[RMDB]
RNA sequence: GGGAACGACUCGAGUAGAGUCGAAAAGGGCUUGACGCAUCGCCCGAAUAGGAUGCAUGUGCUUUUGCACUAAGAUAAAUGUCCGUAUUGUAGGGGACUUAGAACCUACUCAUUAAUGUCCGAAGAGUCUGGGACGAUCAUCAGGCGAGACUAAGAAGACUGCUAAUGCAUUCGUGCAUUAGCAGUCAAAAGAAACAACAACAACAAC
Reactivity to 2A3 in 0.01 (KOAc 150mM, MgCl2 10mM, bicine 150mM(pH8.5), 24C), signal-to-noise 2, nucleotides 027 to 156: g080g000g000c010u020u110g020a020c050g020c010a020u030c040g000c000c000c000g010a000a030u080a020g040g000a020u040g030c020a030u120g010u000g050c010u270u190u150u180g000c000a000c040u020a070a050g040a120u120a030a160a040u120g060u040c000c010g000u080a060u040u140g020u010a000g030g010g000g000a040c080u040u060a080g080a050a020c020c000u000a010c020u050c030a020u030u200a150a020u190g040u000c010c030g010a080a030g010a000g100u000c020u060g010g000g020a020c010g000a150u090c020a020u000c000a010g020g000c010g010a100g060a040c080u120a040a030g020a030a030
Reactivity to DMS in 0.01 (KOAc 150mM, MgCl2 10mM, bicine 150mM(pH8.5), 24C), signal-to-noise 1, nucleotides 027 to 156: g000g000g030c000u000u000g050a070c040g040c140a000u010c040g000c040c000c010g020a040a040u010a090g010g000a040u010g000c000a220u000g070u000g020c010u000u010u000u010g050c000a040c000u000a070a070g010a080u010a050a060a090u010g050u000c000c070g080u000a100u000u000g010u000a070g040g000g010g010a260c120u010u010a130g000a170a150c040c010u000a040c040u000c070a110u000u000a040a080u000g010u000c000c010g020a120a140g000a130g000u000c000u000g060g020g000a090c040g010a010u000c010a070u000c030a000g000g040c010g000a230g010a120c030u000a120a100g020a200a240
The data come from the RNA Mapping Database (RMDB), library OK3TST. This 207-nucleotide RNA was probed chemically with 2A3 and DMS. For DMS the reverse transcriptase was MarathonRT. The 2A3 profile rests on 1,046 reads. The RNA was probed in 150 mM KOAc, 10 mM MgCl2 and 150 mM bicine (pH 8.5) at 24 C. For DMS, 1,804 sequencing reads were counted.